[RMDB]
RNA sequence: GGGAACGACUCGAGUAGAGUCGAAAAAACAUCGCGCAGAAUAGCAAUGAUCAUUGUCUGCAUACGAGUACAAUGUAGAGGAAUUCAUCUUGGCAACCAAACAUAUCACAAUCCUUGCCUUUAAAGGAUGGGGAGGAUAGGUAAGGUAGUCAAGAAGCCAUGCCGUGCAUUUCGAUGCACGGCAUGGAAAAGAAACAACAACAACAAC
Reactivity to 2A3 in 0.01 (KOAc 150mM, MgCl2 10mM, bicine 150mM(pH8.5), 24C), signal-to-noise 3, nucleotides 027 to 156: a000a030c070a160u090c050g000c020g010c030a000g050a150a040u120a060g020c040a020a060u140g120a170u170c090a040u070u080g060u090c010u000g060c050a050u140a190c140g010a020g080u130a070c100a080a040u110g030u110a070g020a060g080g080a090a070u160u100c010a040u060c090u000u000g010g000c010a010a000c000c000a040a070a000c020a020u040a020u050c060a080c050a300a020u010c000c020u040u130g140c000c000u190u240u150a250a250a010g010g000a090u060g010g020g000g010a020g000g000a000u010a020g000g000u030a030a030g000g000u010a040g000u010c000a000a000g000a000a000g050